[RMDB]
RNA sequence: GGGAACGACUCGAGUAGAGUCGAAAACAAACAAACAAAACAACAAGUGCCGAAAUAAACUCGCUGUAAGGGAUGACGGAAAGAAAACCAAGUCAUUCCAAAACGGCACAAAACAGCGAAAACAAAAAUAUAAAUUUAUGUUCGCAUAAAUUUAUAUAAAAGAAACAACAACAACAAC
Reactivity to 2A3 in 0.01 (KOAc 150mM, MgCl2 10mM, bicine 150mM(pH8.5), 24C), signal-to-noise 3, nucleotides 027 to 126: c040a020a050a030c050a050a130a040c090a090a180a040a000c070a030a030c020a180a020g010u000g040c000c000g120a100a080a000u250a070a210a110c050u010c020g010c010u000g010u070a060a040g000g000g000a000u000g000a000c010g050g050a050a120a110g170a030a130a060a000c050c000a080a000g010u000c000a000u000u000c000c000a000a000a000a020c000g010g000c000a000c000a000a020a000a000c000a000g020c000g000a030a040a000a040c030a000a080a030a050
Reactivity to DMS in 0.01 (KOAc 150mM, MgCl2 10mM, bicine 150mM(pH8.5), 24C), signal-to-noise 2, nucleotides 027 to 126: c010a110a120a140c180a060a070a140c170a050a100a070a140c220a100a070c140a070a120g000u000g000c020c050g000a130a040a120u020a090a100a140c110u000c040g000c000u000g000u000a050a080g000g000g000a000u000g000a000c050g000g000a090a030a040g080a120a040a070a050c040c080a040a080g000u010c000a020u000u000c000c000a050a050a020a190c000g000g000c000a000c040a050a050a060a020c010a000g050c000g000a050a120a110a110c130a070a040a030a080